[RMDB]
This 177-nucleotide RNA was probed chemically with 2A3 and DMS. The data come from the RNA Mapping Database (RMDB), library OK2TRN. The RNA was probed in 150 mM KOAc, 10 mM MgCl2 and 150 mM bicine (pH 8.5) at 24 C. DMS adducts were read by reverse transcription with MarathonRT.
RNA sequence: GGGAACGACUCGAGUAGAGUCGAAAAUUAAUGAGCUAUCACUGUCAAUAAUUGAUUUGUCAAAUGGAAUACUCGCAUUAAAUACGAUAUCGUGGUCAUCACAAUGCACGUAUACUUCUACGCCGUCCGUAUAAGCAAGUUUCGACUUGCUUAUACGAAAAGAAACAACAACAACAAC
Reactivity to 2A3 in 0.01 (KOAc 150mM, MgCl2 10mM, bicine 150mM(pH8.5), 24C), signal-to-noise 9, nucleotides 027 to 126: u060u030a050a070u090g030a010g030c030u020a000u070c010a020c080u030g010u030c020a020a080u110a150a140u210u150g100a070u070u040u130g050u030c020a040a060a100u080g030g020a070a040u060a120c020u020c040g020c040a020u060u130a070a150a020u140a050c070g050a060u030a030u150c050g020u020g030g070u110c050a060u080c010a080c040a080a040u080g020c040a020c070g010u030a030u040a050c050u090u040c030u030a060c050g010c050c010g040u040c020
Reactivity to DMS in 0.01 (KOAc 150mM, MgCl2 10mM, bicine 150mM(pH8.5), 24C), signal-to-noise 8, nucleotides 027 to 126: u000u010a060a060u010g010a090g010c070u000a060u000c050a070c080u000g010u000c030a050a090u000a070a140u010u010g010a090u000u010u010g000u000c050a040a070a070u000g010g000a120a070u010a050c080u010c060g010c080a050u000u010a040a060a090u010a060c050g010a090u000a050u000c070g020u010g000g010u010c100a060u000c110a050c120a050a080u000g010c070a050c040g000u010a050u010a070c120u010u000c050u000a050c110g010c050c050g010u010c080